[RMDB]
RNA sequence: GGGAACGACUCGAGUAGAGUCGAAAAAUCAGCCUUCGUUCUGUAAACGGGGUUGGAUCCGACUCUCAUAGGCUCUCCAACCCAACUCCUACUCAAUACGUCCUAGUCGUACAGAACGGUAACAUGUAAAACGAAGGCUGCUUCGGCAGCCUUCGAAGUAUUUGCUACGGUUCGCCGUAGCAAAUACAAAAGAAACAACAACAACAAC
Reactivity to 2A3 in 0.01 (KOAc 150mM, MgCl2 10mM, bicine 150mM(pH8.5), 24C), signal-to-noise 1, nucleotides 027 to 156: a000u090c020a000g050c010c020u060u030c020g010u000u000c000u000g010u030a010a110a090c030g020g000g000g000u000u000g020g000a050u300c000c020g090a100c020u100c040u090c120a140u150a190g000g000c020u000c000u050c000c000a000a020c000c000c000a000a030c020u000c000c000u050a050c010u060c180a010a160u070a210c010g110u090c010c050u080a000g020u100c030g000u010a000c000a010g020a030a030c030g000g000u030a040a070c080a100u240g080u240a010a080a000a120c010g000a000a000g030g000c000u000g000c000u070u030c030g140g000c000a000g000c000c010u000u000c000g000a020a000